This 207-nucleotide RNA was probed chemically with 2A3. The RNA was probed in 150 mM KOAc, 10 mM MgCl2 and 150 mM bicine (pH 8.5) at 24 C. Values cover nucleotides 27 to 156.
RNA sequence: GGGAACGACUCGAGUAGAGUCGAAAACAUAAAAGUAAUUGGUGGAGAUGAUCUCUCAACUUUAACUGGAAAGGUAUGUAUCUUGAAAGGGAAGAAAAAAAAGCACUUCAUACCGAGUCAAUUAGUAACAGUGUGCUUUCAAUCAAUCACUAAGAGAUCGUACCACCAUGUUCGCAUGGUGGUACGAAAAAGAAACAACAACAACAAC
Reactivity to 2A3 in 0.01 (KOAc 150mM, MgCl2 10mM, bicine 150mM(pH8.5), 24C), signal-to-noise 1, nucleotides 027 to 156: c040a040u280a140a080a020a000g050u100a010a080u170u040g020g000u010g030g020a110g000a050u130g040a040u020c060u020c030u000c030a030a060c040u060u180u050a030a010c010u060g000g010a260a000a000g010g000u010a010u050g010u040a100u170c040u050u050g070a010a020a020g030g110g030a070a070g020a130a190a020a000a000a000a000a000g000c030a000c010u080u100c020a010u010a040c070c020g000a000g050u070c010a050a030u030u000a030g030u080a010a130c040a040g000u000g000u010g070c030u010u110u050c080a010a060u030c000a000a000u090c000a010c040u040a090a030g150a010g000a020